The data come from the RNA Mapping Database (RMDB), library OK1LIB. Structure probing data (2A3) for a 177-nucleotide construct. The 2A3 profile rests on 352 reads. Values cover nucleotides 27 to 126.

RNA sequence: GGGAACGACUCGAGUAGAGUCGAAAAUAGUAAGUCACAUGACUCGGCCGGCAUUUCGGCGAUCAAGCCGAAAUUCAAGCGGAGUUUAAAAUUCGGAGAUAUUACUAAUCCUCGGAGAAAUUGCCAACGCGUACAGGUUUUUCGAAACCUGUACGCGAAAAGAAACAACAACAACAAC
Reactivity to 2A3 in 0.01 (KOAc 150mM, MgCl2 10mM, bicine 150mM(pH8.5), 24C), signal-to-noise 1, nucleotides 027 to 126: u000a090g010u000a000a030g010u000c000a080c070a090u020g050a000c100u000c040g230g000c000c000g000g000c020a000u010u010u010c010g000g000c010g050a300u270c180a090a000g010c000c000g000a000a000a000u000u030c000a000a000g000c030g080g000a030g030u010u110u120a110a260a140a120u230u060c190g020g020a050g000a070u150a090u120u060a070c100u100a030a180u000c000c000u010c030g000g000a070g060a110a130a110u220u280g150c000c000a060a110
Record summary: The reactions ran in a buffer of 150 mM KOAc, 10 mM MgCl2 and 150 mM bicine (pH 8.5), at 24 C.